[RMDB]
RNA sequence: GGGAACGACUCGAGUAGAGUCGAAAACACUUUCUCGCAUGGUGCGGGAGUGUGGAGAGGAAACAAAAGCUAGUCUCAGUUGGCAGUGUUCUACACACGGAAAGACUCAUGGGACGGUUAUCUCGACCCAAUGCCUGAGCUUCGGCUCAGGCAUUGGAAAAGAAACAACAACAACAAC
Reactivity to DMS in 0.01 (KOAc 150mM, MgCl2 10mM, bicine 150mM(pH8.5), 24C), signal-to-noise 2, nucleotides 027 to 126: c000a000c000u010u090u000c000u000c000g000c000a160u090g050g060u040g040c000g110g000g000a000g000u020g000u000g010g040a130g030a120g000g030a190a000a020c270a070a080a150a130g000c000u000a100g000u000c000u000c000a060g000u000u000g040g040c300a130g000u000g000u000u000c190u080a040c190a010c200a050c040g030g030a000a290a040g010a040c030u000c180a060u040g000g020g000a080c130g000g030u000u010a070u000c010u010c100g010a300c070
Reactivity to 2A3 in 0.01 (KOAc 150mM, MgCl2 10mM, bicine 150mM(pH8.5), 24C), signal-to-noise 3, nucleotides 027 to 126: c020a000c010u100u140u050c090u000c000g000c020a080u240g220g020u290g070c000g000g040g000a000g000u020g020u000g030g000a040g010a000g010g090a040a130a010c050a000a100a010a010g010c010u020a090g000u000c000u000c020a080g000u050u090g040g040c080a020g000u020g000u050u170c090u170a080c060a010c010a020c180g050g080a060a050a010g050a080c020u090c130a160u070g010g030g030a020c030g000g010u040u010a080u110c040u010c030g090a060c000